[RMDB]
An RNA of 177 nucleotides, treated with 2A3 and DMS and read out base by base. For DMS the reverse transcriptase was MarathonRT. Source: RMDB library OK2TRN, as collected in RNAgym. Reactivities are given for positions 27 through 126. The 2A3 profile rests on 40,466 reads.

RNA sequence: GGGAACGACUCGAGUAGAGUCGAAAAGGAUCCUAAGUACUCUUGGUAACUGCCACUAGAUCAGUUACCAGUGAGGAGUACACUAUGUGUCAAUGAUCUAGUGGUUGACAUAUAGAGAUUAGGAUCGCUACUGGUAUGUAUUCGUACAUACCAGUAGAAAAGAAACAACAACAACAAC
Reactivity to 2A3 in 0.01 (KOAc 150mM, MgCl2 10mM, bicine 150mM(pH8.5), 24C), signal-to-noise 9, nucleotides 027 to 126: g030g000a000u000c000c000u010a040a010g040u040a100c000u000c030u080u050g040g010u070a070a050c010u020g020c030c030a130c100u080a040g050a240u050c000a020g030u020u020a000c000c000a000g010u040g040a100g060g040a020g030u060a010c010a000c000u040a040u090g060u010g000u010c020a010a020u040g030a130u070c040u120a040g070u030g140g010u010u010g010a010c010a000u090a010u020a020g040a000g000a020u020u040a000g000g000a000u010c000g000
Reactivity to DMS in 0.01 (KOAc 150mM, MgCl2 10mM, bicine 150mM(pH8.5), 24C), signal-to-noise 9, nucleotides 027 to 126: g000g000a000u000c000c000u000a010a070g020u010a060c000u000c000u000u000g010g020u000a050a050c020u000g010c170c060a120c160u000a070g010a090u000c000a020g010u000u000a020c000c020a030g010u010g020a100g010g010a090g020u000a040c010a240c010u000a030u010g020u010g000u000c050a030a030u000g000a090u010c130u000a060g020u000g010g010u000u000g010a030c030a040u000a030u000a010g000a080g010a300u000u000a000g010g000a010u000c000g000